An RNA of 207 nucleotides, treated with 2A3 and read out base by base. The reactions ran in a buffer of 150 mM KOAc, 10 mM MgCl2 and 150 mM bicine (pH 8.5), at 24 C. It was measured as part of the RMDB library OK3TST. For 2A3 the reverse transcriptase was SuperScript II with manganese.
RNA sequence: GGGAACGACUCGAGUAGAGUCGAAAAUCAUAAUGGCUUAGGCGGCCGGUACGGAGCAACGAAUAUACCAACGGAAUACCAAUUCAUUACGCUUGCCUCGUCUCCGUCCCGCGAAGGUCAGGCGAAGAUAUACGAUUUUCUGACGAGUUACGUAGGCCUGGGAGUUUUAGUUCGCUAAAACUCCCAGAAAAGAAACAACAACAACAAC
Reactivity to 2A3 in 0.01 (KOAc 150mM, MgCl2 10mM, bicine 150mM(pH8.5), 24C), signal-to-noise 1, nucleotides 027 to 156: u020c000a000u090a300a040u110g020g000c000u070u090a090g110g000c060g010g010c030c040g000g000u000a000c000g000g040a000g030c020a020a010c020g020a080a000u130a010u030a170c010c090a090a010c100g060g030a060a040u130a220c010c090a140a060u110u130c000a030u080u160a080c010g100c170u010u000g000c000c000u040c020g050u020c070u010c030c000g060u040c040c010c000g000c020g010a030a040g010g000u000c000a000g000g020c090g050a060a000g090a100u130a050u060a090c020g010a030u040u080u040u030c020u020g050a030c000g000a000g050u010u050a110c140g000u060a020g080g070c020